[RMDB]
RNA sequence: GGGAACGACUCGAGUAGAGUCGAAAACACAAGCUCGUACAUGGCCACUAUGUUGCCGGGUAGGUUGCGCGGCGGGAGCUUGUGCACCUCUACGUUGACACCCAGCGGGGCUAGGAGCGACUUGAGCGUACUUAUGGGACUUCGGUCCCAUAAGUACAAAAGAAACAACAACAACAAC
Reactivity to DMS in 0.01 (KOAc 150mM, MgCl2 10mM, bicine 150mM(pH8.5), 24C), signal-to-noise 2, nucleotides 027 to 126: c040a160c040a030a060g020c070u010c020g030u000a160c090a090u010g000g020c030c040a090c070u010a110u010g000u000u020g020c020c010g030g010g000u000a070g000g010u000u000g020c010g010c020g010g020c040g000g040g000a120g000c000u010u010g040u000g010c070a060c080c000u010c050u000a050c090g000u010u000g010a050c080a060c060c050c060a080g010c090g020g000g010g000c050u000a030g000g010a280g000c010g010a060c040u000u000g010a090g010c150
Reactivity to 2A3 in 0.01 (KOAc 150mM, MgCl2 10mM, bicine 150mM(pH8.5), 24C), signal-to-noise 2, nucleotides 027 to 126: c040a000c010a020a000g000c070u010c020g050u060a030c030a150u070g030g030c010c050a120c090u110a080u220g060u060u090g040c010c010g030g000g010u080a050g030g170u150u200g010c030g000c020g020g040c050g000g080g020a100g020c000u190u260g010u000g000c000a030c000c020u050c020u080a130c040g060u060u120g100a020c020a020c030c030c000a010g050c090g030g020g040g000c000u030a060g040g070a050g050c020g010a000c000u010u050g030a000g130c100
The data come from the RNA Mapping Database (RMDB), library OK2TST. Structure probing data (DMS and 2A3) for a 177-nucleotide construct. For 2A3, 1,846 sequencing reads were counted. DMS adducts were read by reverse transcription with MarathonRT. Conditions: 150 mM KOAc, 10 mM MgCl2 and 150 mM bicine (pH 8.5), 24 C.